Structure probing data (2A3 and DMS) for a 177-nucleotide construct. For DMS the reverse transcriptase was MarathonRT. Source: RMDB library 15KREP, as collected in RNAgym. For 2A3, 3,694 sequencing reads were counted. Reactivities are rounded to 0.1 and cut off at 0 and 3.
RNA sequence: GGGAACGACUCGAGUAGAGUCGAAAAUAGGGAGGCUAAGACUAGAGUUUUAGUCGUCGUUAAUUCCCAAGAUGUCUAUAAGAGUCUUACCAUAGUUGACAUUCCACAGAGUUUGACUUUUUCAUAUACAUAGUUCAAAGUUCGCUUUGAACUAUGUAAAAGAAACAACAACAACAAC
Reactivity to 2A3 in 0.01 (KOAc 150mM, MgCl2 10mM, bicine 150mM(pH8.5), 24C), signal-to-noise 4, nucleotides 027 to 126: u160a030g040g020g000a030g030g000c010u020a020a010g010a020c020u090a120g050a080g300u020u030u010u010a010g000u010c020g000u000c000g020u020u060a050a040u150u040c000c000c000a000a010g030a010u300g090u060c030u040a040u010a110a000g000a000g000u000c000u020u020a030c010c010a050u080a030g050u020u050g050a030c020a060u080u020c040c030a090c050a130g110a020g060u010u050u050g020a050c000u050u020u000u020u050c100a070u100a010u010
Reactivity to DMS in 0.01 (KOAc 150mM, MgCl2 10mM, bicine 150mM(pH8.5), 24C), signal-to-noise 5, nucleotides 027 to 126: u000a100g010g000g020a090g010g000c010u000a030a030g000a000c000u010a160g010a240g020u000u000u010u000a000g000u000c000g020u010c080g010u010u000a050a160u000u000c000c010c020a110a120g000a060u000g020u000c050u000a030u010a070a300g010a030g000u000c000u000u010a190c010c010a120u000a060g000u000u000g000a070c100a070u010u010c050c140a080c160a140g000a100g000u000u000u000g000a070c070u000u000u000u000u010c040a050u000a180u010